RNA sequence: GGGAACGACUCGAGUAGAGUCGAAAAGAUAUGGAUCGCAACAGAGCCACUCGGAAACGAGAAUGGCGACGAAGUUGACGAUCCUAAGUCAAAGAGGCAAGGCUGUCUUCGGACAGCCUUGCCUCAACAUAAGUUGUACGUUCGCGUACAACUUAUGAAAAGAAACAACAACAACAAC
Reactivity to DMS in 0.01 (KOAc 150mM, MgCl2 10mM, bicine 150mM(pH8.5), 24C), signal-to-noise 6, nucleotides 027 to 126: g000a050u000a300u010g000g010a000u000c000g010c010a010a010c000a070g010a250g010c000c000a050c000u000c000g000g010a080a070a180c010g000a010g000a100a110u010g010g010c000g000a090c220g000a100a070g000u000u000g000a130c010g010a010u000c000c000u000a000a070g010u000c040a060a110a140g000a010g000g010c000a010a000g000g010c000u000g010u000c000u000u020c200g010g010a010c000a000g000c000c000u000u000g000c000c000u000c000a000a040